Notes: The record gives the reactivity of an RNA of 207 nucleotides to DMS and 2A3. Source: RMDB library OK3TST, as collected in RNAgym.
[RMDB]
RNA sequence: GGGAACGACUCGAGUAGAGUCGAAAAAGGUUUACUUGGUUCCAGGAAGUGGUGCUAUAUGGUAAAAUAUGUGAGACCUUCCUCAGAUGCUGCACAGAAUUUAAUAGGUCAGGGGUCAAACUGGUUAAGAUAAGGCACUGUAACAUUAACCUAUCAGUCUACCUAGACUAUUCGUAGUCUAGGUAGAAAAAGAAACAACAACAACAAC
Reactivity to DMS in 0.01 (KOAc 150mM, MgCl2 10mM, bicine 150mM(pH8.5), 24C), signal-to-noise 3, nucleotides 027 to 156: a070g000g020u000u010u000a060c050u000u000g010g010u010u000c060c070a130g020g010a090a120g030u000g020g050u000g020c030u000a090u060a040u000g010g000u000a060a060a070a110u000a070u020g010u000g000a230g010a110c040c010u000u000c030c000u000c030a130g000a100u000g020c030u010g000c040a170c070a090g010a090a090u000u000u010a050a100u000a070g010g020u000c050a060g020g020g020g020u000c040a040a080a100c030u010g030g020u000u000a050a060g000a130u010a060a150g000g020c020a020c040u010g000u000a040a090c050a110u000u000a050a080c010c030u000a070u000c080a110g010
Reactivity to 2A3 in 0.01 (KOAc 150mM, MgCl2 10mM, bicine 150mM(pH8.5), 24C), signal-to-noise 3, nucleotides 027 to 156: a010g090g000u050u070u050a100c050u020u020g050g000u110u020c000c050a010g080g010a070a060g080u070g060g050u070g020c030u050a030u050a060u190g060g000u120a070a020a080a110u180a060u110g060u020g040a060g020a050c000c000u070u000c000c000u020c010a030g000a100u070g040c040u050g000c040a020c020a070g080a080a010u050u130u110a190a060u140a040g050g000u040c020a010g030g000g000g010u040c020a030a040a040c060u030g000g050u070u070a050a010g010a160u080a110a040g050g000c010a010c060u030g040u140a060a010c020a050u030u060a030a040c000c010u060a080u180c060a030g100
2A3 adducts were read by reverse transcription with SuperScript II with manganese. Reactivities are given for positions 27 through 156.